[RMDB]
RNA sequence: GGGAACGACUCGAGUAGAGUCGAAAAAAUUUGUCUACCGCAUCAUUCAGUCAUUUAACGAGUCUAGUUUGAAUUUGGGUGACUCGGUAUGUGGAUGAAUGAGUCGGAAGCUAAUUGGAUCAUAUCACAAGGAUCACCUUUUCGAAGGUGAUCCUUGAAAAGAAACAACAACAACAAC
Reactivity to DMS in 0.01 (KOAc 150mM, MgCl2 10mM, bicine 150mM(pH8.5), 24C), signal-to-noise 2, nucleotides 027 to 126: a010a020u010u000u000g000u060c000u000a080c000c000g020c060a050u010c000a000u010u010c000a000g000u020c000a020u010u010u000a030a020c000g000a010g000u000c010u000a100g020u070u040u050g000a090a150u030u010u030g040g020g000u000g020a000c010u000c000g000g000u000a010u000g000u000g010g000a020u020g000a000a000u010g000a010g020u010c020g050g000a130a000g020c030u010a020a040u000u020g000g000a260u030c080a090u000a160u010c160a160
Reactivity to 2A3 in 0.01 (KOAc 150mM, MgCl2 10mM, bicine 150mM(pH8.5), 24C), signal-to-noise 3, nucleotides 027 to 126: a000a000u100u040u050g040u010c070u030a050c050c020g000c010a080u000c000a000u020u000c000a000g040u010c020a050u090u040u000a040a000c000g000a000g000u000c010u120a080g160u090u060u270g300a300a280u230u170u110g200g030g020u210g000a000c000u050c000g000g000u020a020u010g020u000g000g030a040u000g000a010a000u010g000a000g060u010c000g000g000a000a030g000c030u030a000a000u000u050g080g010a070u070c030a090u150a050u130c010a010
Structure probing data (DMS and 2A3) for a 177-nucleotide construct. Conditions: 150 mM KOAc, 10 mM MgCl2 and 150 mM bicine (pH 8.5), 24 C.